[RMDB]
RNA sequence: GGGAACGACUCGAGUAGAGUCGAAAAGUUCACACUUCGGUGUGAACAAAAAAGCGUACUACCGUGUGAGGACGAACUACUUGGGCAUCCCAAAUAGGAUGCAUAAGCGUCUACCCACCACACGGUAUCGCAAAAAAGCCGUACUUCGGUACGGCAAGUACUAUGGAGACUUCGGUCUCCAUAGUACAAAAGAAACAACAACAACAAC
Reactivity to 2A3 in 0.01 (KOAc 150mM, MgCl2 10mM, bicine 150mM(pH8.5), 24C), signal-to-noise 2, nucleotides 027 to 156: g000u000u000c000a010c000a020c010u090u150c300g090g000u000g010u000g010a020a000c020a010a000a010a000a000a020g090c060g010u060a040c030u000a000c030c000g000u020g010u000g030a060g000g060a010c010g010a040a070c110u200a050c020u300u040g080g010g000c000a000u000c000c070c000a050a040a040u100a040g000g000a000u000g000c020a000u000a040a000g010c000g000u000c010u040a100c060c040c070a060c000c000a010c020a010c020g010g030u000a030u000c000g000c000a100a100a000a000a000a000g020c030c000g000u020a010c000u030u080c210g120g000u000a020c000g000g000c000a000a000
Reactivity to DMS in 0.01 (KOAc 150mM, MgCl2 10mM, bicine 150mM(pH8.5), 24C), signal-to-noise 1, nucleotides 027 to 156: g040u000u010c000a000c040a000c010u000u000c300g030g040u010g030u000g020a000a010c000a000a000a030a030a030a160g010c060g010u000a110c100u000a000c000c000g050u000g000u020g020a290g000g040a070c030g020a100a080c060u010a130c030u000u000g020g020g010c000a020u000c000c030c000a030a130a200u010a020g080g000a000u000g000c010a030u000a050a010g000c080g000u010c030u000a020c000c000c040a300c090c060a020c030a010c000g000g050u000a030u020c030g000c000a000a020a030a120a100a190g000c000c000g040u000a030c000u030u000c230g060g010u000a000c000g030g020c020a020a030
This 207-nucleotide RNA was probed chemically with 2A3 and DMS. The RNA was probed in 150 mM KOAc, 10 mM MgCl2 and 150 mM bicine (pH 8.5) at 24 C. The 2A3 profile rests on 1,731 reads. For DMS, 2,062 sequencing reads were counted.